[RMDB]
RNA sequence: GGGAACGACUCGAGUAGAGUCGAAAACCGACGAUGUUCCCCAGCCAGGGAUUUUCUUCCUCGAGUUUCUUGAUGGUCUUCCUGGUCUUCCGGAGAUCUUUCUCGAGCUCCUCCGCCUUUUUCCUUGCCCCUAUGCUCUUCGGAGCAUAGAAAAGAAACAACAACAACAAC
Reactivity to DMS in 0.01 (KOAc 150mM, MgCl2 10mM, bicine 150mM(pH8.5), 24C), signal-to-noise 9, nucleotides 027 to 129: c040c020g030a120c130g030a150u070g020u000u020c020c010c010c070a120g040c070c040a060g020g000g010a070u010u000u000u000c050u010u000c040c020u000c070g030a110g040u010u020u010c050u010u020g030a120u050g010g000u010c060u020u030c010c010u000g020g010u040c100u060u010c050c060g010g000a090g000a060u010c080u000u040u010c040u020c030g020a040g010c060u000c000c000u020c000c000g010c020c010u000u000u000u000u000c030c020u000u000g020c020c000c000
Reactivity to 2A3 in 0.01 (KOAc 150mM, MgCl2 10mM, bicine 150mM(pH8.5), 24C), signal-to-noise 9, nucleotides 027 to 129: c030c000g010a030c050g040a070u190g020u030u020c000c000c000c000a000g050c020c010a030g030g030g020a040u070u070u070u040c040u090u040c010c010u030c030g070a070g040u060u100u040c050u070u100g070a120u160g020g010u010c020u100u060c030c030u050g040g040u090c040u180u040c040c010g020g010a050g010a050u020c000u010u090u010c020u010c010g020a020g000c010u030c000c000u020c000c000g000c000c000u040u020u000u030u030c000c000u010u080g040c000c000c000